[RMDB]
RNA sequence: GGGAACGACUCGAGUAGAGUCGAAAAGAUAUGGAUGUUAAACAGCUAGCCUGUGAUCGGAAACGAUCACAAGGCUUGGACCUGUGACAUCCUAAGUCAAACCCGUAAGGGUUCGCCCUUACGGGAACAUAAACAAUCACUUCGGUGAUUGUUUAUGAAAAGAAACAACAACAACAAC
Reactivity to 2A3 in 0.01 (KOAc 150mM, MgCl2 10mM, bicine 150mM(pH8.5), 24C), signal-to-noise 5, nucleotides 027 to 126: g020a010u050a030u120g000g000a010u000g030u040u110a300a300a040c010a010g030c050u120a030g000c010c000u010g000u000g010a000u000c000g020g030a040a050a030c010g000a010u000c010a000c010a060a070g000g000c000u010u080g020g030a040c020c010u000g010u020g030a000c000a000u000c000c000u000a100a010g020u020c040a080a060a170c000c000c000g000u000a000a000g090g000g010u040u140c300g150c000c000c020u000u000a000c000g000g000g000a000a000
Reactivity to DMS in 0.01 (KOAc 150mM, MgCl2 10mM, bicine 150mM(pH8.5), 24C), signal-to-noise 9, nucleotides 027 to 126: g000a030u000a290u010g000g000a010u000g020u000u000a090a130a140c010a010g010c040u000a030g020c000c000u000g010u000g010a000u000c000g020g000a090a070a180c010g020a010u000c000a000c000a020a050g010g010c000u000u010g020g010a090c300c010u000g010u000g000a030c010a010u000c000c000u000a030a100g010u000c020a110a150a240c000c000c000g000u010a010a010g010g010g020u000u010c270g000c000c000c000u000u000a000c000g010g000g000a010a040